[RMDB]
Conditions: 150 mM KOAc, 10 mM MgCl2 and 150 mM bicine (pH 8.5), 24 C.
Chemical mapping of a 207-nucleotide RNA with 2A3.
It was measured as part of the RMDB library M2RFPK.
The 2A3 profile rests on 570 reads.
RNA sequence: GGGAACGACUCGAGUAGAGUCGAAAAGAAAGAAAGAGGCGAGCUGGCGCAGCCGCACGGGCAACCGUCAAUCCAGCACUUCACAAGUCUUGUCGUUCUGACAGGACAUCCAUCAACCCACCGGGAAAAAAGGACUACAGCUUCGGCUGUAGUCCAACUAUCACAACGAGUUCGCUCGUUGUGAUAGAAAAGAAACAACAACAACAAC
Reactivity to 2A3 in 0.01 (KOAc 150mM, MgCl2 10mM, bicine 150mM(pH8.5), 24C), signal-to-noise 1, nucleotides 027 to 156: g060a030a070a000g050a000a090a000g070a010g030g000c050g030a040g000c010u000g010g020c000g050c040a030g100c080c020g040c030a050c050g010g000g000c030a030a020c010c000g030u080c010a000a030u010c010c010a010g010c020a060c040u080u080c130a070c000a300a000g000u000c000u000u020g010u000c040g040u190u220c130u300g000a010c000a000g010g000a000c000a010u010c010c000a060u040c010a030a100c000c000c030a070c080c100g040g020g000a000a060a040a060a040a130g000g000a000c000u000a000c000a010g030c000u020u190c280g060g000c000u000g000u000a000g000u010c000c000a000a000